[RMDB]
RNA sequence: GGGAACGACUCGAGUAGAGUCGAAAAACCCAUUCCUGGAGAGGAACAGACUCAAAUCUUUCUGGGCUGGGUCACUUACCUUGGUUAAAUCUGUUCUCCACCUAUUCUACCAACAACCAAAGGGAUGGUGAAUAUAUUUAUUCGUAAAUAUAUUCACAAAAGAAACAACAACAACAAC
Reactivity to DMS in 0.01 (KOAc 150mM, MgCl2 10mM, bicine 150mM(pH8.5), 24C), signal-to-noise 5, nucleotides 027 to 126: a060c010c000c000a170u000u010c000c000u000g010g010a090g000a020g010g000a070a070c140a100g010a100c090u000c090a090a130a170u010c030u000u000u010c070u000g000g010g020c300u000g000g010g010u000c040a070c110u000u000a110c040c020u000u010g030g010u000u010a070a110a090u010c050u000g010u000u000c030u000c020c030a050c050c050u000a070u010u000c060u010a090c050c040a040a090c140a040a070c040c050a020a050a070g000g000g010a060u010g000
Reactivity to 2A3 in 0.01 (KOAc 150mM, MgCl2 10mM, bicine 150mM(pH8.5), 24C), signal-to-noise 5, nucleotides 027 to 126: a000c020c000c000a010u090u060c010c010u040g030g010a040g000a020g030g030a070a050c020a070g140a130c030u040c150a060a190a230u040c020u020u130u060c050u090g020g010g000c000u020g030g010g000u020c030a030c090u080u130a070c010c020u030u040g030g030u040u090a080a140a100u090c040u060g030u080u010c030u030c020c000a040c010c010u060a100u160u050c020u030a090c040c020a050a050c010a050a020c040c010a090a050a050g060g030g010a060u090g060

The record gives the reactivity of an RNA of 177 nucleotides to DMS and 2A3. The reactions ran in a buffer of 150 mM KOAc, 10 mM MgCl2 and 150 mM bicine (pH 8.5), at 24 C. The DMS profile rests on 3,697 reads. High DMS reactivity at an A or C suggests that its Watson-Crick edge is free. Values cover nucleotides 27 to 126.